[RMDB]
RNA sequence: GGGAACGACUCGAGUAGAGUCGAAAAGAUAUGGACGUAUACCAGGCUGAUGACCAAUGUACACACAUAUGGCUCGGAAACGAGCCAUAUGUGUGUACAUUGCAAGGCCGUAUGACGUCCUAAGUCAUCCGAUAAUAGGGUUCGCCCUAUUAUCGGAAAAAGAAACAACAACAACAAC
Reactivity to DMS in 0.01 (KOAc 150mM, MgCl2 10mM, bicine 150mM(pH8.5), 24C), signal-to-noise 2, nucleotides 027 to 126: g000a050u000a300u020g020g010a010c000g050u000a020u010a050c060c190a230g020g020c000u020g030a140u010g030a210c300c000a000a020u020g030u010a000c000a010c000a010c010a000u010a010u000g000g030c000u000c000g000g000a060a060a190c010g010a000g040c000c000a000u000a000u000g000u000g000u000g000u000a000c000a000u000u000g000c030a090a060g020g050c000c010g010u010a020u000g020a010c000g010u000c000c000u010a010a050g000u000c070a190

An RNA of 177 nucleotides, treated with DMS and read out base by base. Source: RMDB library TTRINS, as collected in RNAgym. The RNA was probed in 150 mM KOAc, 10 mM MgCl2 and 150 mM bicine (pH 8.5) at 24 C. Values are in units of 0.01, from 0 to 300, in steps of 10. Reactivities are given for positions 27 through 126.